[RMDB]
RNA sequence: GGGAACGACUCGAGUAGAGUCGAAAAUGACUAUGAGUCACUCGUAAGAUUCUUUAGUGAAAAUCCACAUUCAGCAGAAUAUUUGGAGGCGCAAUGUGCGAGUGAUUAUAUUGAAGAGAAAGUGAUGGGUACUCGACAUAUUCGUAUGUCGAGUACCAAAAGAAACAACAACAACAAC
Reactivity to 2A3 in 0.01 (KOAc 150mM, MgCl2 10mM, bicine 150mM(pH8.5), 24C), signal-to-noise 4, nucleotides 027 to 126: u210g130a070c120u080a080u240g080a000g000u000c000a030c050u000c000g030u030a030a070g040a220u150u080c020u040u190u150a180g020u110g160a070a030a020a050u030c030c000a010c020a040u010u010c020a100g050c040a080g190a200a050u140a150u160u230u250g090g030a040g040g000c050g000c090a050a010u060g020u060g040c000g000a010g000u010g000a000u040u000a040u020a000u030u210g080a150a050g060a000g070a040a130a000g130u100g140a040u130g060
Reactivity to DMS in 0.01 (KOAc 150mM, MgCl2 10mM, bicine 150mM(pH8.5), 24C), signal-to-noise 2, nucleotides 027 to 126: u030g000a150c080u060a000u050g000a070g000u010c000a010c000u000c020g010u050a060a070g010a040u060u040c050u000u000u010a180g040u110g000a030a020a020a130u000c000c020a010c260a050u000u030c120a210g040c120a100g010a030a000u000a110u060u040u050g020g000a070g000g080c060g030c110a020a040u020g050u000g000c000g000a010g010u000g000a040u000u000a000u010a110u000u010g010a050a060g000a120g020a100a040a110g010u010g000a130u000g000
The record gives the reactivity of an RNA of 177 nucleotides to 2A3 and DMS. 2A3 adducts were read by reverse transcription with SuperScript II with manganese. DMS adducts were read by reverse transcription with MarathonRT. It was measured as part of the RMDB library OK1LIB. The RNA was probed in 150 mM KOAc, 10 mM MgCl2 and 150 mM bicine (pH 8.5) at 24 C.